[RMDB]
RNA sequence: GGGAACGACUCGAGUAGAGUCGAAAAAAGUUUUGGGAAGAGGCAUUCUAUAGAGAUCUCUAUAGUUCGCCUACCACUUUGCAGGCUGUCGGUUCAUGCGUUGUAUGCCAUUCACAGACUUCCCUACGAGGUCGGCGCUUCGGCGCCGACAAAAGAAACAACAACAACAAC
Reactivity to 2A3 in 0.01 (KOAc 150mM, MgCl2 10mM, bicine 150mM(pH8.5), 24C), signal-to-noise 2, nucleotides 027 to 129: a000a030g130u130u100u080u020g020g000g020a010a010g000a190g000g010c010a000u020u000c000u000a000u020a000g100a100g050a150u020c060u000c000u300a070u000a020g080u000u170c020g000c000c000u000a000c000c030a030c000u000u000u020g020c100a000g050g040c020u010g000u110c050g040g030u080u030c000a000u070g010c010g130u120u090g030u050a000u060g000c000c000a100u070u100c000a000c000a100g000a020c000u000u010c000c020c070u000a030c070g000a000g020
Reactivity to DMS in 0.01 (KOAc 150mM, MgCl2 10mM, bicine 150mM(pH8.5), 24C), signal-to-noise 2, nucleotides 027 to 129: a060a010g050u000u000u050u050g000g000g070a070a030g000a100g020g000c000a030u000u010c000u000a020u020a060g030a060g080a280u010c200u070c020u060a070u000a020g000u070u000c030g000c000c000u060a050c100c060a080c040u000u000u060g090c120a060g000g020c040u040g000u020c180g030g030u060u000c180a040u000g020c020g040u000u000g070u030a080u020g000c030c050a000u010u020c090a000c070a070g000a120c030u010u010c050c000c000u050a190c180g020a130g010